[RMDB]
RNA sequence: GGGAACGACUCGAGUAGAGUCGAAAAUUCUAAGUUUAUUACCUGAUUUAACUCAUUCAAUCCUCACAGUUGAUGAGAUAGAGGUACUGUUAUCCCUAUUUUGCAGAUGAGGAAAACUGAAGCAGAGCCAGAUAAGUGAGUUCGCUCACUUAUCUGGAAAAGAAACAACAACAACAAC
Reactivity to 2A3 in 0.01 (KOAc 150mM, MgCl2 10mM, bicine 150mM(pH8.5), 24C), signal-to-noise 2, nucleotides 027 to 126: u090u060c040u110a130a160g030u050u070u130a170u130u050a130c000c000u050g050a150u060u020u170a040a000c020u000c010a020u200u050c010a020a040u050c010c050u100c070a050c040a050g060u060u030g040a130u040g000a020g000a010u010a010g100a050g000g010u050a080c020u050g130u300u040a060u060c010c000c000u000a060u030u150u040u070g030c010a050g020a100u020g030a060g070g000a050a090a040a050c030u010g010a020a010g010c030a010g000a040g020
Reactivity to DMS in 0.01 (KOAc 150mM, MgCl2 10mM, bicine 150mM(pH8.5), 24C), signal-to-noise 2, nucleotides 027 to 126: u010u010c080u020a080a160g020u010u000u010a060u030u020a080c030c000u000g020a210u010u000u010a040a110c030u010c000a050u000u000c040a020a110u020c070c080u020c170a060c160a140g050u010u000g020a040u000g010a040g000a070u020a020g000a010g010g000u000a020c300u010g020u010u010a090u000c010c000c010u000a170u010u010u000u000g020c030a040g000a110u000g020a080g000g000a030a050a130a060c080u000g020a130a110g020c030a100g010a110g010